Source: RMDB library OK3TST, as collected in RNAgym. Chemical mapping of a 207-nucleotide RNA with 2A3 and DMS. The 2A3 profile rests on 981 reads. For DMS the reverse transcriptase was MarathonRT.
[RMDB]
RNA sequence: GGGAACGACUCGAGUAGAGUCGAAAAGAGUACCAGCAGGUGAAGCCACUAGCGCCACUGCCAGCGGAUCGGAUGGCGAAGCCUCAGUACCAGCAGAGGCUUUCGGAAGAGUUCUUCGGGUCGGAUCGGACGCAGAUACCCAAGUCCAGUGGCUCCAGAGCAGUUUAUAGUUCGCUAUAAACUGCUCAAAAGAAACAACAACAACAAC
Reactivity to 2A3 in 0.01 (KOAc 150mM, MgCl2 10mM, bicine 150mM(pH8.5), 24C), signal-to-noise 2, nucleotides 027 to 156: g070a000g030u020a030c010c010a000g080c100a060g030g120u070g110a130a000g010c010c000a050c040u050a020g040c000g020c050c020a020c010u080g000c020c000a050g000c040g060g010a080u090c070g050g000a060u040g080g060c020g010a040a020g000c000c000u000c000a040g040u100a100c080c020a010g020c050a020g010a020g030g010c000u030u080u060c040g010g010a050a010g040a040g090u090u030c000u040u080c050g040g010g000u040c070g000g000a040u040c040g050g000a010c010g000c080a010g000a100u090a060c010c000c000a050a000g060u030c030c000a020g010u000g040g000c000u000c040c060a040
Reactivity to DMS in 0.01 (KOAc 150mM, MgCl2 10mM, bicine 150mM(pH8.5), 24C), signal-to-noise 1, nucleotides 027 to 156: g010a210g040u000a090c010c010a080g000c020a020g020g000u000g000a060a120g020c000c010a140c030u010a050g030c010g000c060c080a110c070u030g020c010c030a060g060c040g060g000a050u000c070g000g040a070u020g000g030c090g020a040a100g010c040c000u010c010a120g010u000a300c090c040a190g000c020a190g000a050g070g010c010u000u010u000c020g020g010a060a110g000a140g020u000u000c060u000u000c040g000g020g040u020c040g020g000a130u000c000g000g000a120c070g010c010a060g000a120u000a040c030c020c010a160a260g000u000c010c030a030g040u000g010g020c010u000c030c010a300